[RMDB]
The record gives the reactivity of an RNA of 177 nucleotides to 2A3 and DMS. Reactivities are given for positions 27 through 126.
RNA sequence: GGGAACGACUCGAGUAGAGUCGAAAAGAUAUGGACCGUUAUAGCAACAGCAUGCCAUCGGAAACGAUGGACAUGACAUGCUGCAACGGUCCUAAGUCAAAAGCAAUUGCGGUUCGCCGCAAUUGCAUCCUUUGUCCAUCUUCGGAUGGACAAAGGAAAAAGAAACAACAACAACAAC
Reactivity to 2A3 in 0.01 (KOAc 150mM, MgCl2 10mM, bicine 150mM(pH8.5), 24C), signal-to-noise 2, nucleotides 027 to 126: g000a010u020a000u040g010g000a000c000c010g020u020u010a020u020a000g000c100a100a190c130a300g030c000a000u000g000c010c000a020u020c000g000g000a010a000a000c020g000a000u020g010g100a020c000a000u000g040a020c060a170u300g000c000u010g000c000a000a000c000g000g000u000c000c000u000a000a000g010u010c010a000a020a100a070g000c000a000a020u010u010g000c000g000g200u040u160c300g030c110c000g000c020a000a000u020u000g010c000a000
Reactivity to DMS in 0.01 (KOAc 150mM, MgCl2 10mM, bicine 150mM(pH8.5), 24C), signal-to-noise 2, nucleotides 027 to 126: g000a020u000a060u020g000g000a020c000c010g000u010u000a030u000a010g030c000a160a110c300a100g020c000a000u000g000c000c000a000u000c020g000g010a030a010a070c000g010a020u000g000g000a090c010a000u000g020a030c100a130u030g030c020u030g010c060a010a010c010g000g000u000c000c000u000a010a060g000u010c000a050a080a160a190g010c010a000a000u000u000g000c000g010g020u000u030c300g020c000c000g020c000a000a000u000u010g030c010a040